[RMDB]
RNA sequence: GGGAACGACUCGAGUAGAGUCGAAAAUCUCCGAUCUUUGAGUUCAGCACGAGAGUAUCGUCCCACGUUGCAGGCAUCAAUUUAAGGAAUUCAAACAGGUCGGCCUUCUUCAGAUACUCUUCCGGCGGACUGCGUAUAGUUUCGACUAUACGCAGUCAAAAGAAACAACAACAACAAC
Reactivity to 2A3 in 0.01 (KOAc 150mM, MgCl2 10mM, bicine 150mM(pH8.5), 24C), signal-to-noise 2, nucleotides 027 to 126: u030c020u020c020c010g020a010u050c060u050u050u070g070a050g030u070u080c070a050g070c070a030c130g030a020g000a000g030u030a000u030c020g100u100c030c010c010a050c140g030u090u070g000c050a010g010g030c010a030u010c020a220a220u090u250u190a170a030g160g030a040a030u100u060c010a060a060a120c050a070g100g040u040c000g110g000c000c030u070u050c000u050u000c030a010g000a050u000a010c010u000c000u070u010c050c030g080g020c030g000
Reactivity to DMS in 0.01 (KOAc 150mM, MgCl2 10mM, bicine 150mM(pH8.5), 24C), signal-to-noise 2, nucleotides 027 to 126: u000c000u000c010c020g000a050u010c000u000u010u010g000a070g020u000u000c030a090g000c060a110c090g000a050g020a030g000u000a040u000c020g010u000c060c020c030a150c170g010u010u000g020c070a040g010g010c010a090u010c120a090a100u010u020u000a080a160g010g020a080a040u010u010c130a030a030a130c170a090g010g000u000c040g000g000c010c030u000u000c040u000u000c040a150g010a050u000a010c020u000c020u000u010c110c040g000g000c050g000